[RMDB]
RNA sequence: GGGAACGACUCGAGUAGAGUCGAAAAUGCGUACGUUGAGGUAGGGGAAGCGUGUCGGUGCAGGCAAGAGACCACCGUAAGCGUCGCUGCAAACAUAUAAGCGCCGAUUCCAAUCAGCGCGACUACGCACUCGCUGCCUAAGUAGCGACUGCGUGUCGUGUCUGCCUCCGUUCGCGGAGGCAGACACAAAAGAAACAACAACAACAAC
Reactivity to 2A3 in 0.01 (KOAc 150mM, MgCl2 10mM, bicine 150mM(pH8.5), 24C), signal-to-noise 1, nucleotides 027 to 156: u080g030c030g010u040a030c010g000u030u060g060a060g000g040u060a060g090g020g010g050a010a060g040c000g010u080g020u100c010g010g020u030g030c070a000g000g000c000a010a000g000a000g000a020c000c000a000c010c000g120u100a000a000g000c000g000u020c030g000c000u000g000c000a000a060a000c020a010u170a000u030a140a010g000c010g000c010c000g020a020u280u140c160c090a090a080u040c000a050g000c000g050c000g000a010c010u150a030c000g000c000a000c000u010c000g000c000u010g030c010c110u240a260a050g000u010a000g000c000g000a000c020u000g000c010g000u000g070u050c040

Chemical mapping of a 207-nucleotide RNA with 2A3. Reactivities are given for positions 27 through 156. The 2A3 profile rests on 1,011 reads.